[RMDB]
RNA sequence: GGGAACGACUCGAGUAGAGUCGAAAACGGCCAGCAUCGCCGCAUCGCGGAUACCGAUACUGGAAUCAUCGGCCUCGCAGGCAGCAAACAGAGAACGGAUCUCCUCCGGCGGCAGGGCCCUGCCGCGGAAACGACGGUCUUUCGAGACCGUCGUUUCAAAAGAAACAACAACAACAAC
Reactivity to 2A3 in 0.01 (KOAc 150mM, MgCl2 10mM, bicine 150mM(pH8.5), 24C), signal-to-noise 2, nucleotides 027 to 126: c010g050g000c000c000a000g000c010a060u020c000g020c030c010g000c100a210u120c270g000c030g020g010a040u100a210c010c030g000a010u010a170c010u040g030g020a050a040u060c020a020u040c070g020g000c000c020u020c040g040c050a060g050g050c020a030g000c050a080a060a150c000a060g090a030g030a110a020c070g050g000a070u000c010u010c050c010u040c020c000g110g010c020g000g000c000a000g050g100g130c130c080c000u020g000c000c000g040c000g020
An RNA of 177 nucleotides, treated with 2A3 and read out base by base. Source: RMDB library OK1LIB, as collected in RNAgym.